The record gives the reactivity of an RNA of 207 nucleotides to 2A3. The RNA was probed in 150 mM KOAc, 10 mM MgCl2 and 150 mM bicine (pH 8.5) at 24 C. For 2A3, 948 sequencing reads were counted.
RNA sequence: GGGAACGACUCGAGUAGAGUCGAAAAGAAAGAAAGAAAGAAGCCGGCUCUGCUAGUUUCACGGCAACCACGUUGAAAUUACAACGAAAGAAGCACGCACUCAACUUCAACGGCUUAACGAGUGCAAAAAAGAAGUAUCACUUCGGUGAUACUUCAACACGCAAUGUUUGUUCGCAAACAUUGCGUGAAAAGAAACAACAACAACAAC
Reactivity to 2A3 in 0.01 (KOAc 150mM, MgCl2 10mM, bicine 150mM(pH8.5), 24C), signal-to-noise 2, nucleotides 027 to 156: g030a010a050a020g060a030a050a000g020a050a090a060g030a130a000g070c110c040g020g010c020u030c020u090g000c010u030a040g070u080u040u090c110a060c050g030g010c030a030a110c000c040a010c010g000u010u020g060a150a170a150u190u160a090c030a070a000c020g060a060a040a010g030a040a010g020c020a010c120g000c020a000c020u000c000a020a090c010u020u060c050a060a060c010g010g020c000u050u020a020a020c010g000a000g030u030g000c090a000a100a000a000a000a000g000a000a000g000u000a000u000c010a000c000u040u080c180g020g000u000g000a000u000a010c000u000u010c000a000a000